Conditions: 150 mM KOAc, 10 mM MgCl2 and 150 mM bicine (pH 8.5), 24 C. This 177-nucleotide RNA was probed chemically with DMS and 2A3. For 2A3, 702 sequencing reads were counted. High DMS reactivity at an A or C suggests that its Watson-Crick edge is free. For DMS, 1,121 sequencing reads were counted. Reactivities are given for positions 27 through 126.

RNA sequence: GGGAACGACUCGAGUAGAGUCGAAAAUUUACGUACACCCACUUCUCAAUCUGCUGAACAGCUUUGCGGGUGUCACAGCAGACAUGUAUGCGGACGACCUCUCUAUUAUCGUUAAGGGGCAGUCCCGAAUCCCAGCGUAGUUCGCUACGCUGGGAUUAAAAGAAACAACAACAACAAC
Reactivity to DMS in 0.01 (KOAc 150mM, MgCl2 10mM, bicine 150mM(pH8.5), 24C), signal-to-noise 1, nucleotides 027 to 126: u040u000u110a020c120g000u000a170c060a030c000c000c000a010c220u020u000c090u010c130a150a240u000c000u000g020c000u000g070a300a040c060a070g000c000u000u040u020g010c300g010g000g020u000g000u000c090a040c020a000g050c050a030g010a000c260a070u040g000u050a050u030g000c120g000g000a030c000g000a030c000c000u020c000u000c050u000a130u000u170a110u050c220g030u010u020a100a000g020g000g000g000c270a190g000u000c000c020c080g040
Reactivity to 2A3 in 0.01 (KOAc 150mM, MgCl2 10mM, bicine 150mM(pH8.5), 24C), signal-to-noise 2, nucleotides 027 to 126: u020u200u080a150c100g090u210a090c110a020c080c010c000a040c060u130u040c040u000c120a000a000u030c000u000g000c000u000g030a070a030c000a000g300c000u100u100u090g060c070g000g080g030u000g000u000c000a000c020a280g000c000a000g000a000c010a140u140g050u080a120u000g090c090g000g000a000c000g130a100c000c000u000c000u000c020u000a070u300u000a140u250c150g100u110u150a010a010g050g000g000g000c000a070g040u000c000c000c000g040